[RMDB]
RNA sequence: GGGAACGACUCGAGUAGAGUCGAAAAACUGACGGUACGCCGUCAGAACGGUAGAAAAGAUGGUUUGAAAACCACGCCUUCUACCAAUAUAGUAAAUAAAUAGGCGGAGCGGUCAUACGCGACCGCAAAAACAUCCUUGGCUUCGGCCAAGGAUGAACAGGGACAUUAACUUCGGUUAAUGUCCCUGAAAAGAAACAACAACAACAAC
Reactivity to 2A3 in 0.01 (KOAc 150mM, MgCl2 10mM, bicine 150mM(pH8.5), 24C), signal-to-noise 1, nucleotides 027 to 156: a000c000u000g000a020c010g000g000u090a040c130g030c040c000g000u000c000a000g010a030a000c030g000g010u000a000g000a000a000a000a000g060a270u050g010g080u060u080u200g130a090a080a020a000c000c000a010c000g030c000c010u000u000c010u020a010c000c000a010a000u090a010u030a040g060u040a000a000a180u070a040a110a080u130a010g010g000c020g010g010a030g000c010g010g010u010c050a040u160a300c100g000c090g050a040c000c000g000c010a020a020a020a020a020c000a000u000c000c000u010u000g000g000c000u020u010c150g080g000c000c010a000a000g000g000a000u000g000a000a010